The record gives the reactivity of an RNA of 177 nucleotides to DMS and 2A3. The reactions ran in a buffer of 150 mM KOAc, 10 mM MgCl2 and 150 mM bicine (pH 8.5), at 24 C. Source: RMDB library OK2TRN, as collected in RNAgym.
[RMDB]
RNA sequence: GGGAACGACUCGAGUAGAGUCGAAAAGCAUCUGGGCGGUGCUGUCGGACUUCUUUGUGGAGGUGGGCUGCCACAAGAACCUGCAGGUGGCCAUGUACUCUGUGGACAGCCUGCGCCAGCUGGCCACUCUAUCAAGGUUCUUCGGAACCUUGAUAGAAAAAGAAACAACAACAACAAC
Reactivity to DMS in 0.01 (KOAc 150mM, MgCl2 10mM, bicine 150mM(pH8.5), 24C), signal-to-noise 3, nucleotides 027 to 126: g030c030a040u000c030u000g010g000g020c040g010g010u000g020c010u010g010u000c050g020g020a120c130u000u000c070u010u020u020g010u010g000g000a060g010g020u000g010g000g020c030u010g010c010c000a080c030a040a060g010a070a080c200c070u010g020c060a120g020g000u000g000g020c030c040a090u000g000u010a090c070u000c070u010g020u000g010g000a030c010a010g020c000c000u000g020c000g010c020c030a070g010c060u000g010g010c010c030a090c180
Reactivity to 2A3 in 0.01 (KOAc 150mM, MgCl2 10mM, bicine 150mM(pH8.5), 24C), signal-to-noise 2, nucleotides 027 to 126: g040c010a020u010c010u030g010g040g050c010g040g050u150g000c000u000g000u030c030g080g080a090c050u130u000c020u110u300u270g140u220g070g030a060g060g030u190g090g070g060c040u030g010c010c000a040c010a000a070g070a100a110c040c020u090g050c090a120g030g010u000g020g010c020c000a010u040g020u050a100c020u010c070u110g040u090g070g020a040c000a010g000c000c000u000g000c060g120c010c010a020g000c010u010g030g000c000c000a030c010
Reactivities are rounded to 0.1 and cut off at 0 and 3.